[RMDB]
RNA sequence: GGGAACGACUCGAGUAGAGUCGAAAAAUUUUUUUCAGUUGGGCCUUCUGGUGAUGUUUUUGGCCACCCAGGAGGUCCUGAGGAAGAAUCCUUUUCAGUUGGGCCUUCUGGUGAUGUUUCAGGCCACGCAGGAUUACCUGUUCGCGGGUAGUCUUGCAAAAGAAACAACAACAACAAC
Reactivity to 2A3 in 0.01 (KOAc 150mM, MgCl2 10mM, bicine 150mM(pH8.5), 24C), signal-to-noise 2, nucleotides 027 to 126: a000u040u020u020u000u000u000u040c000a030g020u020u010g030g030g000c000c000u020u080c010u040g000g020u040g070a180u030g090u050u060u020u090u160g160g020c030c020a000c030c000c010a000g010g000a010g000g050u000c000c000u000g000a000g040g020a020a050g040a060a110u070c000c000u000u070u050u080c020a030g010u060u020g010g000g000c000c000u060u050c020u050g020g060u070g050a070u080g150u040u010u040c030a000g030g020c000c000a020c020
Reactivity to DMS in 0.01 (KOAc 150mM, MgCl2 10mM, bicine 150mM(pH8.5), 24C), signal-to-noise 2, nucleotides 027 to 126: a010u020u010u000u030u030u020u000c030a110g000u010u010g000g000g010c000c010u000u010c040u000g010g000u010g000a070u010g010u000u010u020u030u000g010g010c040c020a180c110c000c000a000g020g000a010g000g010u000c000c010u000g010a040g010g010a030a050g010a090a080u010c080c040u020u020u010u010c060a100g000u030u010g010g020g020c020c000u020u000c020u000g010g000u030g000a070u030g010u010u000u000c080a040g020g000c000c020a060c290